[RMDB]
RNA sequence: GGGAACGACUCGAGUAGAGUCGAAAAUUAUACCCGCAUAUCAUUCAGACCCUUUAUGGAACUGUCAUUCAACCCCAAAAAUCUAGUGCAAAUAUUGUCUUAAUUACUUAGGCUAAAAGAAUUAAGUUAUACAAUACACUCUUCGGAGUGUAUUGAAGUUACGAAGUUACUUCGGUAACUUCGUAACAAAAGAAACAACAACAACAAC
Reactivity to 2A3 in 0.01 (KOAc 150mM, MgCl2 10mM, bicine 150mM(pH8.5), 24C), signal-to-noise 1, nucleotides 027 to 156: u100u020a060u090a240c000c000c000g010c070a140u180a050u090c070a040u190u030c040a020g040a150c050c000c000u040u070u130a210u110g030g010a090a050c000u070g030u100c030a030u130u090c040a050a090c000c000c000c000a120a060a000a000a000u030c060u080a050g010u020g030c030a050a020a190u120a070u090u070g010u000c000u000u030a010a020u030u060a190c020u040u070a000g060g020c020u100a170a140a000a000g000a000a000u000u000a000a010g000u030u100a090u000a140c000a000a000u020a000c000a000c000u020c000u040u050c100g150g000a000g000u000g000u010a000u020u000g000a000a000
Chemical mapping of a 207-nucleotide RNA with 2A3. The RNA was probed in 150 mM KOAc, 10 mM MgCl2 and 150 mM bicine (pH 8.5) at 24 C.